Source: RMDB library OK3TST, as collected in RNAgym. Chemical mapping of a 207-nucleotide RNA with 2A3 and DMS. High DMS reactivity at an A or C suggests that its Watson-Crick edge is free. For 2A3 the reverse transcriptase was SuperScript II with manganese. The reactions ran in a buffer of 150 mM KOAc, 10 mM MgCl2 and 150 mM bicine (pH 8.5), at 24 C. DMS adducts were read by reverse transcription with MarathonRT.
RNA sequence: GGGAACGACUCGAGUAGAGUCGAAAAGUAAUAGCUGAUAGAUGGUGAAUCAUCCUGUUUCUAGUAUAGAGAGACUGAAUCAUAUUUCUGAGAUCAAAGUGGCUUCUUGAUGAUUCCAUUGAUUCUCUUUAGAACACAGGUAUAGUCCCUAUAUUGCACUAAAGAGCGAGUUCGCUCGCUCUUUAGUAAAAGAAACAACAACAACAAC
Reactivity to 2A3 in 0.01 (KOAc 150mM, MgCl2 10mM, bicine 150mM(pH8.5), 24C), signal-to-noise 3, nucleotides 027 to 156: g010u060a020a160u050a150g030c020u030g060a070u050a140g100a150u150g040g050u100g120a050a060u080c020a020u040c050c030u000g000u000u010u010c010u020a040g000u020a090u080a070g070a010g000a010g000a040c010u030g040a060a030u020c030a040u070a100u190u170u070c070u080g050a050g000a030u050c040a070a110a120g100u060g060g000c030u070u020c020u070u160g090a120u060g000a010u020u010c010c020a030u040u110g020a090u290u000c000u040c000u070u160u040a040g010a010a030c080a000c010a110g000g000u020a010u010a020g020u000c010c000c000u020a020u030a020u070u120g030c030
Reactivity to DMS in 0.01 (KOAc 150mM, MgCl2 10mM, bicine 150mM(pH8.5), 24C), signal-to-noise 2, nucleotides 027 to 156: g000u010a110a100u000a120g010c050u000g000a140u010a050g000a100u000g000g040u010g020a200a080u000c020a050u010c000c010u000g020u010u000u000c030u010a050g010u010a150u000a060g020a080g020a050g030a080c120u000g000a060a030u000c010a080u000a090u000u000u000c090u000g000a060g010a050u010c030a040a050a100g000u010g030g020c030u010u000c000u000u000g020a070u010g010a020u000u010c020c070a170u000u000g010a150u000u000c000u010c010u000u000u000a050g000a050a060c090a040c030a020g000g010u000a090u000a110g000u000c010c000c000u010a140u000a070u000u000g000c060